[RMDB]
RNA sequence: GGGAACGACUCGAGUAGAGUCGAAAAGCAGACCCGAGAUGAAAAGCUCUCCUCCUGCGAAGCCCCUCUUCGGAGCACUGUGCAGCUAGGCCCCUUGGAGGGCGGCAACGCCCGGGCCUCUGAGGUCUAAUCAUUAUGCUUUCGAGCAUAAUGAUUAAAAAGAAACAACAACAACAAC
Reactivity to DMS in 0.01 (KOAc 150mM, MgCl2 10mM, bicine 150mM(pH8.5), 24C), signal-to-noise 7, nucleotides 027 to 126: g000c060a090g010a130c050c060c070g000a090g010a070u010g010a100a070a130a150g010c060u000c010u000c030c050u010c080c030u010g020c030g000a100a130g010c050c010c020c040u000c040u010u010c080g000g010a050g000c090a070c070u000g010u010g000c020a060g000c090u010a080g010g000c010c010c010c100u000u000g020g010a110g000g010g030c010g010g010c190a070a140c090g020c040c010c020g010g000g010c010c010u000c060u000g010a050g010g000u010c070
Reactivity to 2A3 in 0.01 (KOAc 150mM, MgCl2 10mM, bicine 150mM(pH8.5), 24C), signal-to-noise 7, nucleotides 027 to 126: g030c020a020g020a100c010c020c060g010a020g010a040u210g040a070a110a060a080g030c010u000c010u010c020c010u040c010c010u030g020c010g030a040a030g030c000c000c010c010u030c020u030u040c050g040g010a030g030c030a030c090u080g030u090g040c020a030g020c030u090a040g020g060c010c000c000c020u020u040g060g030a060g030g010g000c000g000g000c030a130a100c070g020c000c000c000g020g020g060c000c000u010c010u030g020a020g010g020u010c020